[RMDB]
RNA sequence: GGGAACGACUCGAGUAGAGUCGAAAAGUAAAUACUUUCGAGUAUUUACAAAGAAGGCUGCAACGCGCAGCGCGCUCGCGAGAGCACGCCGCAGCAAAAUAAAAACUGCUGGAUUCGUCCAGCAGAACAUGAAUGACUUAUUCGUAAGUCAUUCAUGAAAAGAAACAACAACAACAAC
Reactivity to DMS in 0.01 (KOAc 150mM, MgCl2 10mM, bicine 150mM(pH8.5), 24C), signal-to-noise 7, nucleotides 027 to 126: g010u000a000a000a010u000a000c000u000u000u010c130g020a020g020u000a000u000u010u000a010c000a080a100a130g000a130a110g010g020c030u000g010c050a100a090c180g020c110g020c130a080g010c000g020c020g010c010u000c010g010c300g010a200g000a020g020c000a010c010g010c010c050g000c010a050g020c020a090a050a100a090u010a050a040a080a070a130c010u000g000c000u010g000g010a030u000u010c150g010u000c000c000a000g010c000a010g010a040a080
Reactivity to 2A3 in 0.01 (KOAc 150mM, MgCl2 10mM, bicine 150mM(pH8.5), 24C), signal-to-noise 5, nucleotides 027 to 126: g000u000a010a010a000u010a010c010u040u070u130c150g040a010g000u000a010u010u000u010a000c000a000a070a010g100a050a030g160g000c030u030g010c040a170a110c130g040c020g000c170a020g010c000g000c010g000c010u010c000g000c030g030a060g000a000g070c000a000c000g010c000c040g000c020a010g000c010a040a060a100a010u110a010a090a020a020a040c000u000g000c000u000g000g010a020u030u040c160g050u020c020c000a000g010c000a000g000a000a010